[RMDB]
RNA sequence: GGGAACGACUCGAGUAGAGUCGAAAAACGUGGAUAUGGAUUUACUCCGAGGAGACGAACUACCACGAACAGGGGAAACUCUACCCGUGGCGUCUCCGUUUGACGAGUAAGUCCUAAGUCAACAUGCCAACGCGGAUGUUCGCAUCCGCGAAAAGAAACAACAACAACAAC
Reactivity to DMS in 0.01 (KOAc 150mM, MgCl2 10mM, bicine 150mM(pH8.5), 24C), signal-to-noise 1, nucleotides 027 to 129: a050c140g000u040g060g000a040u040a010u100g000g020a030u040u010u010a020c000u000c010c000g010a110g000g040a060g010a020c040g000a140a000c000u130a300c070c040a020c020g030a010a170c060a070g190g000g030g040a130a050a030c020u040c020u010a060c210c150c010g020u000g050g000c000g000u000c000u000c000c010g020u090u180u000g020a240c300g030a000g030u020a000a020g040u030c000c020u010a000a050g000u030c020a020a000c010a080u100g040c090c040a090a090
Reactivity to 2A3 in 0.01 (KOAc 150mM, MgCl2 10mM, bicine 150mM(pH8.5), 24C), signal-to-noise 2, nucleotides 027 to 129: a030c070g010u040g000g000a010u020a000u030g000g000a000u000u020u000a000c000u000c000c010g020a070g000g000a000g020a000c020g010a020a030c080u190a080c150c000a000c000g020a060a010c000a060g000g000g000g000a000a000a000c000u010c000u010a020c000c010c000g000u010g020g000c010g000u000c000u000c000c000g010u060u040u090g000a000c000g000a000g000u000a000a000g000u000c000c000u000a000a000g000u010c000a010a040c000a060u140g060c020c030a070a050
Chemical mapping of a 170-nucleotide RNA with DMS and 2A3. For DMS the reverse transcriptase was MarathonRT. Conditions: 150 mM KOAc, 10 mM MgCl2 and 150 mM bicine (pH 8.5), 24 C. For 2A3, 8,934 sequencing reads were counted. Reactivities are given for positions 27 through 129. For DMS, 5,053 sequencing reads were counted.